Chemical mapping of a 207-nucleotide RNA with DMS and 2A3. 2A3 adducts were read by reverse transcription with SuperScript II with manganese. Values cover nucleotides 27 to 156. The RNA was probed in 150 mM KOAc, 10 mM MgCl2 and 150 mM bicine (pH 8.5) at 24 C. For DMS the reverse transcriptase was MarathonRT. The 2A3 profile rests on 3,435 reads.
[RMDB]
RNA sequence: GGGAACGACUCGAGUAGAGUCGAAAAGCGGUGGGCCGUCAUGAAUGCCUGACCGGCCUUGCGAAAACACUCGAGGGUGCCGGGGUCGGGCAGCAGGGUGAGGGCAGAGUGAUCCACCUUCAGGGGAGUCAGGAUCUUCAACGCCAUUUCCAUGGCGCCCAUAUCAUAUUUUCGAAUAUGAUAUGGGAAAAGAAACAACAACAACAAC
Reactivity to DMS in 0.01 (KOAc 150mM, MgCl2 10mM, bicine 150mM(pH8.5), 24C), signal-to-noise 2, nucleotides 027 to 156: g000c070g030g050u000g000g000g000c030c030g000u010c050a060u000g030a130a120u010g000c030c000u000g010a030c030c030g050g010c000c010u020u000g050c010g010a090a100a120a180c080a120c100u000c040g000a110g030g020g000u000g060c020c060g030g000g020g020u000c040g060g000g010c020a010g000c030a090g010g010g030u010g000a120g010g010g020c060a110g020a110g010u020g000a040u000c000c010a110c060c010u000u010c090a110g020g020g040g000a060g030u000c010a080g000g000a100u000c030u000u010c040a070a200c050g000c010c000a060u000u010u000c130c070a090u000g040g000c030g000
Reactivity to 2A3 in 0.01 (KOAc 150mM, MgCl2 10mM, bicine 150mM(pH8.5), 24C), signal-to-noise 4, nucleotides 027 to 156: g070c060g010g050u100g060g010g020c060c030g080u060c030a060u110g210a240a060u060g030c000c010u000g020a010c000c010g000g000c000c000u030u070g060c040g040a070a040a080a050c110a060c040u030c020g040a060g030g040g000u090g080c080c130g150g040g050g040u040c020g000g010g000c010a000g000c030a020g030g040g000u130g050a110g000g020g020c080a040g030a020g090u100g020a020u010c020c010a050c040c000u050u090c060a030g040g000g000g010a020g040u060c080a050g020g010a050u010c000u100u060c080a070a030c020g020c000c010a020u150u130u040c090c100a010u000g010g000c010g030